[RMDB]
RNA sequence: GGGAACGACUCGAGUAGAGUCGAAAAACAGUUUGAGGAGUGUGUGUCUGCGCUGAACGAGGCGCGCUGCAGACGCUCGCUGCAGGCCAACGCUGCGCUGUACGAGCGGGACACACACCGCUGGGCACGUACCCACCCAUUUCGAUGGGUGGGUACGAAAAGAAACAACAACAACAAC
Reactivity to 2A3 in 0.01 (KOAc 150mM, MgCl2 10mM, bicine 150mM(pH8.5), 24C), signal-to-noise 3, nucleotides 027 to 126: a000c010a040g040u120u200u220g110a130g130g030a170g020u020g000u000g000u000g010u010c030u270g190c030g000c010u040g060a150a030c070g030a090g050g000c010g010c020g000c050u050g010c020a020g040a150c090g060c120u070c180g030c010u030g000c010a020g040g000c070c020a170a080c070g080c210u220g000c080g000c000u020g020u120a100c030g010a020g000c000g000g000g010a000c000a000c000a000c000a010c000c000g000c000u030g000g060g000c100a020
Reactivity to DMS in 0.01 (KOAc 150mM, MgCl2 10mM, bicine 150mM(pH8.5), 24C), signal-to-noise 2, nucleotides 027 to 126: a100c070a070g010u010u010u000g030a080g040g020a080g010u000g020u000g010u010g000u000c000u010g020c020g020c000u000g010a050a060c040g010a300g000g010c010g010c030g000c010u000g020c040a020g010a140c150g020c100u010c220g000c030u000g010c000a030g000g010c050c060a090a070c140g000c070u010g010c000g010c000u000g000u000a090c100g010a060g000c000g000g000g000a000c000a010c010a020c000a000c000c040g010c030u000g000g010g000c100a190

This 177-nucleotide RNA was probed chemically with 2A3 and DMS. The 2A3 profile rests on 2,300 reads. Conditions: 150 mM KOAc, 10 mM MgCl2 and 150 mM bicine (pH 8.5), 24 C. It was measured as part of the RMDB library OK2TST.